[RMDB]
RNA sequence: GGGAACGACUCGAGUAGAGUCGAAAAGAAAGAAAGAAAGGUGACAUUAGCCAAUCACAAUGCCACAAUGCUUGUGAAAGAGAGAGAAACACAAACAUUGUGGCAUUGUGAUUGGCCAAUGUCACAAUUGCUUUGCAUUGUUCGCAAUGCAAAGCAAAAAAGAAACAACAACAACAAC
Reactivity to DMS in 0.01 (KOAc 150mM, MgCl2 10mM, bicine 150mM(pH8.5), 24C), signal-to-noise 1, nucleotides 027 to 126: g000a100a190a090g020a040a050a100g010a050a040a210g000g010u000g000a010c010a000u000u000a150g050c000c000a020a000u000c000a000c010a000a000u000g050c010c000a010c000a000a010u000g010c020u000u010g000u000g000a070a160a050g000a120g100a200g060a200g000a140a080a100c010a010c000a000a040a010c000a030u000u000g000u000g010g000c000a000u000u000g000u020g000a070u000u000g050g000c050c010a020a020u000g000u000c000a000c000a020a020